[RMDB]
RNA sequence: GGGAACGACUCGAGUAGAGUCGAAAAGGUGAGAGGGGAUCUCUCCCCCCUCUGAUUGGCUGUUAGUAAGCUGGGAAACUUAUCAGUAACAGAACAAUCAGUAUGAUGACCUGGUGCAUCAUAACCCUAAAGAUGAGGUCUUCGGACCUCAUCUUUAAAAAGAAACAACAACAACAAC
Reactivity to DMS in 0.01 (KOAc 150mM, MgCl2 10mM, bicine 150mM(pH8.5), 24C), signal-to-noise 2, nucleotides 027 to 126: g020g010u040g000a020g000a060g000g000g070g020a180u020c030u000c130u000c000c000c000c020c010c000u000c010u000g000a030u000u000g000g000c030u000g000u000u000a090g000u010a050a010g000c090u030g020g070g000a200a100a190c020u010u000a030u050c300a170g000u000a010a010c000a000g020a040a120c000a000a000u000c000a040g000u000a020u000g000a040u000g000a050c010c090u000g010g000u040g000c040a020u000c010a000u000a020a110c050c010c040
Reactivity to 2A3 in 0.01 (KOAc 150mM, MgCl2 10mM, bicine 150mM(pH8.5), 24C), signal-to-noise 4, nucleotides 027 to 126: g040g000u120g020a040g030a040g030g060g030g150a200u100c060u000c000u040c070c000c000c000c000c000u040c010u000g000a000u000u000g020g030c000u010g010u010u000a010g020u020a010a010g000c010u060g080g160g010a050a060a020c010u020u000a030u120c040a080g070u050a000a000c000a000g000a070a080c010a010a000u000c000a000g010u020a020u050g000a000u020g020a040c040c200u190g110g000u300g030c000a000u000c000a000u030a090a100c010c010c000